[RMDB]
This 177-nucleotide RNA was probed chemically with 2A3 and DMS.
For DMS the reverse transcriptase was MarathonRT.
It was measured as part of the RMDB library OK1LIB.
RNA sequence: GGGAACGACUCGAGUAGAGUCGAAAAUACACCUCGGGCACUACCGGCGAGCCCAAAGGCGUGGGGAUCACCCAUCGCAACGUCACCAGGCUGUUCGCAUCACUGCCGGCACGCUUGUCGGCGGCGCCGAUUGAGGGACCUUCGGGUCCCUCAAUCGAAAAGAAACAACAACAACAAC
Reactivity to 2A3 in 0.01 (KOAc 150mM, MgCl2 10mM, bicine 150mM(pH8.5), 24C), signal-to-noise 3, nucleotides 027 to 126: u120a010c040a090c000c020u050c060g000g030g040c010a020c050u080a030c020c020g030g000c030g020a010g000c000c000c000a050a050a030g060g000c030g010u050g020g010g000g100a160u180c040a120c060c010c000a080u220c060g000c050a080a030c010g020u010c000a020c070c000a040g020g100c040u130g060u160u100c030g000c040a040u080c010a000c020u050g000c000c000g000g010c030a000c030g180c070u090u110g010u040c040g010g000c010g020g000c000g000c010
Reactivity to DMS in 0.01 (KOAc 150mM, MgCl2 10mM, bicine 150mM(pH8.5), 24C), signal-to-noise 1, nucleotides 027 to 126: u010a100c170a100c080c050u010c130g050g000g050c040a110c080u010a090c000c000g000g000c020g050a110g060c050c010c120a000a000a140g000g000c050g040u000g000g000g000g000a160u150c260a020c000c000c010a050u020c090g000c040a110a090c040g020u000c030a000c110c040a020g000g000c080u050g000u030u000c070g000c030a060u050c070a100c050u010g000c060c050g090g020c140a000c210g000c050u090u020g060u020c030g000g000c000g000g000c120g000c010

The RNA was probed in 150 mM KOAc, 10 mM MgCl2 and 150 mM bicine (pH 8.5) at 24 C.